[RMDB]
This 207-nucleotide RNA was probed chemically with 2A3 and DMS.
RNA sequence: GGGAACGACUCGAGUAGAGUCGAAAACGCAUGCGAGAGCAUGCGGCUAAGCUUCGGCUUAGUAAGAGCAACUUAGGAUUAUAGGCUCCCCGGCGUGUCUCGAACCAUGCCGGGCCAAACCCAUAGGGCUGGCGGUCCCUGUGCGGUCUAAAUUCAAAAAUGGACGAUUAUUCGUAAUCGUCCAUUUAAAAGAAACAACAACAACAAC
Reactivity to 2A3 in 0.01 (KOAc 150mM, MgCl2 10mM, bicine 150mM(pH8.5), 24C), signal-to-noise 4, nucleotides 027 to 156: c000g010c010a000u000g010c000g010a040g000a010g020c010a000u000g000c000g000g000c000u000a000a000g000c000u010u140c270g110g000c000u000u010a000g000u020a050a020g000a000g000c020a020a170c060u080u130a070g040g020a050u050u050a090u100a210g040g050c000u010c000c000c000c000g000g000c010g000u010g010u010c060u050c260g080a040a010c020c000a000u020g000c000c000g000g000g000c000c000a010a020a000c000c000c000a010u020a000g010g010g000c040u060g080g060c050g020g040u130c000c000c000u000g010u000g020c130g010g010u000c010u090a060a060a030u120u100c060a130a070
Reactivity to DMS in 0.01 (KOAc 150mM, MgCl2 10mM, bicine 150mM(pH8.5), 24C), signal-to-noise 2, nucleotides 027 to 156: c010g010c000a020u000g010c000g020a300g000a300g020c010a010u000g000c020g020g040c000u000a020a010g000c020u000u000c300g090g010c000u000u000a010g010u010a060a140g020a150g050c050a060a130c040u000u000a090g030g030a180u000u000a110u000a120g000g000c030u000c060c020c020c010g030g030c010g070u000g020u000c080u000c230g000a170a230c190c010a020u000g030c000c000g000g010g000c030c040a050a070a050c000c000c000a080u000a050g000g010g030c010u000g010g000c050g030g000u000c000c000c010u010g030u000g020c060g000g000u010c020u010a070a080a120u010u000c020a020a120

The 2A3 profile rests on 3,253 reads. It was measured as part of the RMDB library OK3TST. For DMS, 5,345 sequencing reads were counted.